[RMDB]
RNA sequence: GGGAACGACUCGAGUAGAGUCGAAAAGAUUUACGAGAGUAAAUCGCAUUUGGAAACAAAUGUAAGGCGGAAUUACGACGCUAACGCCCUACAUUGGUAUCGAACCCAAUGUAGAUAAGUGCUAGUAGAUGGCAGACUACUAGACACAUGCGUUGAACGCCGAGCGAGUGUUCGCACUCGCUCGGCGAAAAGAAACAACAACAACAAC
Reactivity to 2A3 in 0.01 (KOAc 150mM, MgCl2 10mM, bicine 150mM(pH8.5), 24C), signal-to-noise 1, nucleotides 027 to 156: g010a000u020u000u000a000c000g000a000g010a000g140u000a000a000a010u000c000g000c000a010u010u010u030g000g040a040a070a010c040a000a010a030u040g040u050a040a050g000g000c010g000g080a070a050u200u190a170c050g020a000c000g020c000u000a090a000c010g010c000c000c000u010a000c010a000u000u000g050g000u060a120u270c100g030a030a050c020c000c000a010a000u000g020u010a000g000a000u070a110a030g010u020g000c000u000a000g000u000a000g000a050u150g140g010c040a070g020a070c000u000a000c000u020a020g110a010c000a000c020a020u120g000c000g000u000u010g040a070a020

The data come from the RNA Mapping Database (RMDB), library OK3TST. The record gives the reactivity of an RNA of 207 nucleotides to 2A3. For 2A3 the reverse transcriptase was SuperScript II with manganese. Conditions: 150 mM KOAc, 10 mM MgCl2 and 150 mM bicine (pH 8.5), 24 C.